Annotation: Conditions: 150 mM KOAc, 10 mM MgCl2 and 150 mM bicine (pH 8.5), 24 C. An RNA of 177 nucleotides, treated with 2A3 and DMS and read out base by base.
[RMDB]
RNA sequence: GGGAACGACUCGAGUAGAGUCGAAAAUCUGAGCGGAGACGCGGACGUGACCGAUGAGCGCUACCAGUACGCGCUGCGCUCUGUACUGGAUAUGGAUCGCACAUCGCUUAAUUCGACAAUGGUGGUCCUCACCAGGGAGUUUCGACUCCCUGGUGAGAAAAGAAACAACAACAACAAC
Reactivity to 2A3 in 0.01 (KOAc 150mM, MgCl2 10mM, bicine 150mM(pH8.5), 24C), signal-to-noise 2, nucleotides 027 to 126: u040c020u040g000a020g050c030g070g010a050g020a080c030g010c000g000g030a010c030g090u040g070a050c000c040g070a160u140g100a040g070c030g010c020u030a090c030c030a020g070u090a040c020g050c020g000c090u070g030c020g010c000u010c030u030g000u040a060c070u030g030g010a040u040a080u180g060g070a040u070c010g030c030a020c000a060u000c000g000c050u160u210a110a050u240u080c040g050a030c010a100a120u100g030g020u010g000g000u000c050
Reactivity to DMS in 0.01 (KOAc 150mM, MgCl2 10mM, bicine 150mM(pH8.5), 24C), signal-to-noise 2, nucleotides 027 to 126: u010c100u000g000a060g030c050g000g000a110g010a180c060g040c020g000g020a070c050g010u010g030a070c040c050g020a100u020g010a130g000c030g030c020u000a050c060c030a090g020u000a040c080g020c130g020c060u010g010c050g010c030u000c050u030g020u000a040c040u000g010g000a280u010a050u010g010g020a080u000c010g020c010a090c030a070u000c030g000c100u000u010a080a140u020u000c030g010a120c100a090a020u020g000g020u000g000g010u000c050